[RMDB]
RNA sequence: GGGAACGACUCGAGUAGAGUCGAAAAGCGUGCAUCGAGAGAGAGAAAAUCGCAACAACUUUCAACGGGCAAAGAAAUCUCAGAAAGAGAACGGGCAAGAAGCGAAAUGUCUGAGACAAGCACGCAAGGGUAUAUCAUACUUCGGUAUGAUAUACCCAAAAGAAACAACAACAACAAC
Reactivity to DMS in 0.01 (KOAc 150mM, MgCl2 10mM, bicine 150mM(pH8.5), 24C), signal-to-noise 4, nucleotides 027 to 126: g000c000g020u000g010c010a130u020c060g010a100g000a180g010a060g000a060g030a010a050a110a100u000c020g030c050a150a090c140a110a090c010u010u010u000c050a050a130c100g020g010g000c220a070a150a090g000a100a100a130u000c010u000c040a090g010a050a090a040g000a140g010a050a060c070g020g000g020c110a100a060g000a150a090g000c020g000a070a070a110u020g000u000c000u010g010a120g000a060c170a090a060g000c000a000c010g000c010a070a090
Reactivity to 2A3 in 0.01 (KOAc 150mM, MgCl2 10mM, bicine 150mM(pH8.5), 24C), signal-to-noise 5, nucleotides 027 to 126: g000c000g010u000g000c010a070u020c040g010a010g000a000g000a000g000a010g070a180a060a070a030u080c020g000c010a000a110c030a030a030c080u010u120u080c030a040a060c060g030g070g000c090a120a040a090g080a040a160a060u020c000u000c000a020g180a060a090a010g070a010g010a080a020c020g020g090g000c050a100a030g090a100a020g060c010g040a030a080a010u130g020u000c000u020g020a030g000a050c050a150a010g000c000a000c030g000c010a020a030